[RMDB]
RNA sequence: GGGAACGACUCGAGUAGAGUCGAAAACCCUCUCGAGUUCUUCUAACUUUUUUCUUCCACUCACCCACUGCUCGAGAAUCUCUUCUCUUUCCAUCGCGCUUCUUCCUCGAUUCGGACCGGCUCAUCUCGACAAGAGGCGGCGGUCCUCAGUGCUCUUACUAAUCUAUAGCUUCGGCUAUAGAUUAGUAAAAGAAACAACAACAACAAC
Reactivity to 2A3 in 0.01 (KOAc 150mM, MgCl2 10mM, bicine 150mM(pH8.5), 24C), signal-to-noise 2, nucleotides 027 to 156: c010c000c010u030c010u000c020g070a050g030u070u060c020u140u020c050u130a210a220c090u130u150u110u070u160u130c040u110u000c040c030a070c030u080c040a050c000c010c050a060c050u050g000c000u010c020g040a020g030a090a090u010c020u000c000u090u090c040u000c000u060u050u060c000c020a070u050c040g020c000g050c070u080u010c000u050u090c110c020u030c050g100a130u140u130c050g000g000a000c000c020g120g040c030u030c080a130u000c000u020c020g130a120c110a220a060g010a020g000g020c020g040g020c000g000g000u000c020c010u000c010a020g020u030g020c020u030c000u000u000